[RMDB]
RNA sequence: GGGAACGACUCGAGUAGAGUCGAAAACACAGCGCUGGCGCUGACUAUUUCGUGAGUCACCGAGGCGUCACACGACUUUGGAGAGCGCACUGUCUUGCGUUGCCGCGCUGCCUCAGCAGGGUCGGGGAGUGGUCCUCCUGUUCGCAGGAGGACCACUAAAAGAAACAACAACAACAAC
Reactivity to 2A3 in 0.01 (KOAc 150mM, MgCl2 10mM, bicine 150mM(pH8.5), 24C), signal-to-noise 2, nucleotides 027 to 126: c080a000c020a010g010c030g000c010u070g090g000c030g000c080u040g020a030c020u070a060u180u140u180c160g000u070g120a030g070u020c020a010c110c090g020a000g000g000c050g000u060c000a000c010a000c050g140a040c000u040u100u130g000g030a120g010a020g060c050g040c000a050c090u030g060u080c040u100u140g000c000g080u060u040g000c000c020g040c000g000c010u020g010c000c000u030c000a010g020c050a020g010g000g140u050c020g000g000g050g050
Source: RMDB library OK1LIB, as collected in RNAgym. The record gives the reactivity of an RNA of 177 nucleotides to 2A3. 2A3 adducts were read by reverse transcription with SuperScript II with manganese. Reactivities are rounded to 0.1 and cut off at 0 and 3.